[RMDB]
RNA sequence: GGGAACGACUCGAGUAGAGUCGAAAAGAUAUGGAGCAUACUGCCUUCGAUAAGCUGGGUUCGGAAACGAACCUCAGCUUUUGACGAAGAUGUAUGCUCCUAAGUCAAAGUCGGGUUCGCCCGACAACAGUAACUAUUGGUUCGCCAAUAGUUACUGAAAAGAAACAACAACAACAAC
Reactivity to 2A3 in 0.01 (KOAc 150mM, MgCl2 10mM, bicine 150mM(pH8.5), 24C), signal-to-noise 6, nucleotides 027 to 126: g040a010u070a040u180g000g000a000g000c000a010u010a010c020u130g210c030c010u020u010c030g080a100u020a120a000g000c000u000g000g010g010u010u000c010g030g020a070a070a070c010g000a000a010c010c010u050c010a010g010c000u010u010u010u030g040a020c010g010a010a000g000a010u030g010u000a000u000g000c010u010c000c000u000a000a000g000u000c020a080a040a040g000u000c000g000g030g040u050u100c300g070c070c000c010g000a000c000a000a000
Reactivity to DMS in 0.01 (KOAc 150mM, MgCl2 10mM, bicine 150mM(pH8.5), 24C), signal-to-noise 9, nucleotides 027 to 126: g000a040u000a300u000g000g010a020g020c000a010u000a010c000u010g010c230c010u000u000c010g020a170u000a010a010g020c000u000g010g000g000u000u010c000g010g000a120a100a250c000g010a000a010c000c000u010c010a000g010c000u000u000u000u000g010a240c150g010a030a020g000a180u000g000u000a000u000g000c000u000c000c000u000a000a060g010u000c040a140a110a170g010u000c010g010g000g020u000u010c300g020c000c000c000g010a010c010a030a090

Record summary
This 177-nucleotide RNA was probed chemically with 2A3 and DMS. Conditions: 150 mM KOAc, 10 mM MgCl2 and 150 mM bicine (pH 8.5), 24 C. Values cover nucleotides 27 to 126.